[RMDB]
RNA sequence: GGGAACGACUCGAGUAGAGUCGAAAAAAUGGUUAGGCAAUGAUGGCACUGUAGCUAAAGAAAACAGUAAGGCAUUGGUACUUAUCCAUAAAGCUGACAAAGAAACUGCUAUUGAAACCUUACGCGCCAGCGCUGUUAUAUUCGUAUAACAGCGCUGAAAAGAAACAACAACAACAAC
Reactivity to 2A3 in 0.01 (KOAc 150mM, MgCl2 10mM, bicine 150mM(pH8.5), 24C), signal-to-noise 6, nucleotides 027 to 126: a000a010u090g010g010u040u020a020g020g000c030a030a030u080g040a030u050g080g030c040a010c060u040g030u030a030g030c070u140a150a090a070g080a030a090a030a010c010a010g030u060a050a020g040g010c020a020u010u040g020g010u030a060c030u080u090a050u000c000c000a020u070a070a110a010g010c020u030g050a060c060a060a150a030g090a040a120a020c030u020g010c000u030a070u070u100g040a100a030a030c010c000u020u030a050c110g020c020g030c070
Reactivity to DMS in 0.01 (KOAc 150mM, MgCl2 10mM, bicine 150mM(pH8.5), 24C), signal-to-noise 8, nucleotides 027 to 126: a090a030u010g010g000u000u000a040g010g010c050a040a060u000g010a040u010g000g010c070a080c040u000g010u000a060g030c130u010a080a110a150g000a070a110a050a050c060a030g010u010a080a110g010g000c030a080u000u000g010g010u000a080c090u000u000a060u010c020c020a030u000a060a070a060g010c020u000g000a070c140a060a060a120g000a080a070a070c100u010g010c030u000a120u000u000g000a080a090a090c040c020u000u000a050c130g010c150g010c190